[RMDB]
RNA sequence: GGGAACGACUCGAGUAGAGUCGAAAAGAUAUGGAGUUUGUCAGGAACUACGCAAACUCGUCGGAAACGACGAGCACUGCGCCUUGGAUUUAACUCCUAAGUCAAAAGGAUUAGUUCGCUAAUCCAACAGGUGAAGGAAGUUCGCUUCCUUCACCUGAAAAGAAACAACAACAACAAC
Reactivity to 2A3 in 0.01 (KOAc 150mM, MgCl2 10mM, bicine 150mM(pH8.5), 24C), signal-to-noise 2, nucleotides 027 to 126: g050a000u050a070u140g000g020a000g030u040u050u080g040u100c000a000g060g020a170a170c150u250a060c300g000c000a050a050a000c000u000c010g000u020c000g050g070a050a070a030c030g000a000c000g000a000g000c040a060c100u010g000c000g040c030c020u050u120g200g000a060u190u280u260a020a020c000u000c000c010u020a090a010g070u050c040a080a010a020a140g000g000a010u020u040a010g050u050u110c230g030c210u010a000a010u010c040c000a010a040
Reactivity to DMS in 0.01 (KOAc 150mM, MgCl2 10mM, bicine 150mM(pH8.5), 24C), signal-to-noise 2, nucleotides 027 to 126: g000a070u000a300u000g000g000a020g000u000u000u000g000u010c000a020g000g000a140a090c070u000a270c040g010c010a000a070a220c000u000c000g000u000c020g000g000a040a120a190c000g030a010c020g000a010g010c100a060c140u000g000c010g000c050c010u000u010g020g000a000u000u000u000a020a000c000u000c010c000u030a050a130g010u000c030a130a070a110a150g000g000a030u000u000a000g010u000u000c240g020c000u000a000a000u000c000c000a120a160

An RNA of 177 nucleotides, treated with 2A3 and DMS and read out base by base. The 2A3 profile rests on 2,172 reads. It was measured as part of the RMDB library TTRDEL. The RNA was probed in 150 mM KOAc, 10 mM MgCl2 and 150 mM bicine (pH 8.5) at 24 C.